[RMDB]
An RNA of 177 nucleotides, treated with DMS and 2A3 and read out base by base. DMS adducts were read by reverse transcription with MarathonRT. 2A3 adducts were read by reverse transcription with SuperScript II with manganese. The DMS profile rests on 2,977 reads. Reactivities are given for positions 27 through 126.

RNA sequence: GGGAACGACUCGAGUAGAGUCGAAAAGGGACCCCACUUCAGCAGGGUCCGCGUUCCAUCCUUUCUUACCUGAUGGCCGGCAUGGUCCCAGCCUCCUCGCUGGCGCCGGCUGGGCAACAUUCCGAGGGGAUAUAUAUACCUUCGGGUAUAUAUAUCCAAAAGAAACAACAACAACAAC
Reactivity to DMS in 0.01 (KOAc 150mM, MgCl2 10mM, bicine 150mM(pH8.5), 24C), signal-to-noise 4, nucleotides 027 to 126: g020g030g010a040c000c010c010c080a090c150u010u010c210a060g020c130a110g000g000g020u000c010c010g010c060g020u000u000c020c030a110u010c060c080u000u010u000c040u000u010a160c050c040u000g010a110u000g000g000c010c000g010g010c030a120u010g030g030u020c290c000c000a040g010c000c080u010c100c040u000c100g010c010u000g010g000c170g010c000c020g000g020c010u000g000g000g000c050a070a070c080a110u000u010c100c070g010a090g000g000
Reactivity to 2A3 in 0.01 (KOAc 150mM, MgCl2 10mM, bicine 150mM(pH8.5), 24C), signal-to-noise 2, nucleotides 027 to 126: g030g010g010a010c020c030c050c030a070c090u300u300c120a100g040c000a030g050g010g000u030c010c010g000c020g010u030u010c030c000a040u050c040c000u150u160u130c020u100u130a160c060c010u070g040a100u110g160g060c050c010g040g000c060a070u150g050g030u090c010c000c000a000g000c010c000u050c020c020u080c000g010c030u020g060g000c030g020c020c000g040g000c000u000g020g010g000c010a060a030c000a070u120u110c030c040g020a020g050g050